Source: RMDB library VIROID, as collected in RNAgym. Chemical mapping of a 177-nucleotide RNA with 2A3 and DMS. 2A3 is a SHAPE reagent: it acylates the 2'-hydroxyl of flexible nucleotides of all four kinds. The reactions ran in a buffer of 150 mM KOAc, 10 mM MgCl2 and 150 mM bicine (pH 8.5), at 24 C. For DMS the reverse transcriptase was MarathonRT. For DMS, 5,697 sequencing reads were counted.

RNA sequence: GGGAACGACUCGAGUAGAGUCGAAAAUCUCCCUUAGCCAUCCGAGUGGACGUUGUCCUCCUUCGGAUGCCCAGGUCGGACCGCGAGGAGGUGGAGAUGCCAUGCCGACCCGAAGAGGAAAGAAGGAUCUCAUAAUAUUCUUCGGAAUAUUAUGAGAAAAAGAAACAACAACAACAAC
Reactivity to 2A3 in 0.01 (KOAc 150mM, MgCl2 10mM, bicine 150mM(pH8.5), 24C), signal-to-noise 2, nucleotides 027 to 126: u010c030u050c000c020c000u030u130a040g050c030c000a010u000c000c010g020a030g040u060g010g040a060c190g250u180u300g040u060c000c010u000c020c050u020u070c030g000g000a000u000g000c010c030c000a040g000g020u030c010g010g030a060c030c020g070c080g050a070g090g030a050g000g050u080g020g030a160g010a050u060g040c030c000a050u120g010c000c000g010a040c000c000c020g060a100a070g050a070g050g020a110a070a070g050a020a030g080g010a040
Reactivity to DMS in 0.01 (KOAc 150mM, MgCl2 10mM, bicine 150mM(pH8.5), 24C), signal-to-noise 5, nucleotides 027 to 126: u010c080u000c010c010c040u000u000a090g020c150c020a030u000c010c000g010a030g010u000g010g020a040c050g010u010u010g000u010c030c020u000c070c110u000u000c010g010g010a030u000g000c060c120c040a090g010g020u000c040g010g020a260c050c070g010c100g010a120g000g020a090g000g010u000g010g010a100g000a080u000g020c050c020a080u010g000c010c010g000a060c010c010c030g000a070a100g000a060g000g000a100a070a080g000a090a080g000g010a190